[RMDB]
RNA sequence: GGGAACGACUCGAGUAGAGUCGAAAAAAAAUCUAGUGCAAAUAUUGUCUUAAUUACUUAGGCUAAAAGAAAUAAGUAUUUAAGCGGGACAAGGCAUCGACAUUUGAUACAAAUAUUGAUCAAUGGAACAAGAAACACUACUUCGGUAGUGUUUCAAGUAACUUAACCAGUUCGCUGGUUAAGUUACAAAAGAAACAACAACAACAAC
Reactivity to 2A3 in 0.01 (KOAc 150mM, MgCl2 10mM, bicine 150mM(pH8.5), 24C), signal-to-noise 1, nucleotides 027 to 156: a000a000a000a070u060c040u070a110g020u020g000c000a090a090a090u070a170u170u100g010u000c000u040u080a030a030u060u000a030c000u010u030a020g050g020c040u140a130a080a070a160g010a040a110a120u000a000a000g010u010a010u030u030u000a010a010g000c010g040g030g000a010c040a090a050g100g010c020a060u110c010g030a030c030a010u110u110u120g020a030u100a050c030a000a230a010u270a140u270u190g000a000u100c010a030a030u160g030g010a080a030c040a110a140g000a010a010a000c000a000c010u000a010c000u000u030c070g100g000u000a000g000u000g000u000u000u000c000a010a000
Background
This 207-nucleotide RNA was probed chemically with 2A3. For 2A3 the reverse transcriptase was SuperScript II with manganese. Conditions: 150 mM KOAc, 10 mM MgCl2 and 150 mM bicine (pH 8.5), 24 C. Values cover nucleotides 27 to 156. Source: RMDB library M2RFPK, as collected in RNAgym.